[RMDB]
RNA sequence: GGGAACGACUCGAGUAGAGUCGAAAAAGACGGAAACCCAUCGACUGUCACCAGAUGCUGCAUCACCUGAUCACUGAUGGCUCAACGGUAUCCGGCGGUACAACUGAAUCCUUGUAGCUGCCUUUUGAAAAGGAGUUCAUCUUCGGAUGAACUCCAACAUAUUCCACUACUUCGGUAGUGGAAUAUGAAAAGAAACAACAACAACAAC
Reactivity to 2A3 in 0.01 (KOAc 150mM, MgCl2 10mM, bicine 150mM(pH8.5), 24C), signal-to-noise 6, nucleotides 027 to 156: a000g050a020c050g030g030a050a090a060c050c000c000a050u080c060g100a090c030u040g020u050c030a010c060c010a030g030a100u070g020c050u060g030c020a040u020c020a050c040c020u050g030a040u070c030a010c040u040g020a020u050g060g000c020u040c070a090a070c060g010g030u060a060u050c050c050g020g000c010g000g020u040a040c020a050a020c060u170g070a080a080u100c010c010u040u040g030u050a060g050c020u040g030c010c010u100u120u070u180g110a090a090a050a040g000g000a000g000u000u000c000a000u000c000u030u060c160g070g000a000u000g000a000a000c000u000c000c000a000a000
Reactivity to DMS in 0.01 (KOAc 150mM, MgCl2 10mM, bicine 150mM(pH8.5), 24C), signal-to-noise 3, nucleotides 027 to 156: a100g020a120c020g020g000a090a070a100c070c010c020a100u000c020g020a110c030u000g010u010c040a080c050c020a100g000a060u000g020c050u010g010c070a130u000c090a040c020c010u020g020a140u000c080a150c110u010g020a120u000g000g000c050u010c060a060a100c060g020g010u000a060u000c020c020g020g020c030g030g050u000a050c030a060a080c050u010g000a060a080u000c040c020u000u020g020u000a070g040c000u010g010c010c110u000u000u000u000g010a040a080a120a160g010g000a020g030u000u000c000a010u000c000u000u000c300g070g030a020u000g000a010a010c020u000c010c000a000a040
An RNA of 207 nucleotides, treated with 2A3 and DMS and read out base by base. High 2A3 reactivity points to a flexible backbone, as in loops and unpaired stretches. For 2A3, 6,349 sequencing reads were counted. The reactions ran in a buffer of 150 mM KOAc, 10 mM MgCl2 and 150 mM bicine (pH 8.5), at 24 C. The DMS profile rests on 5,199 reads. The data come from the RNA Mapping Database (RMDB), library M2RFPK.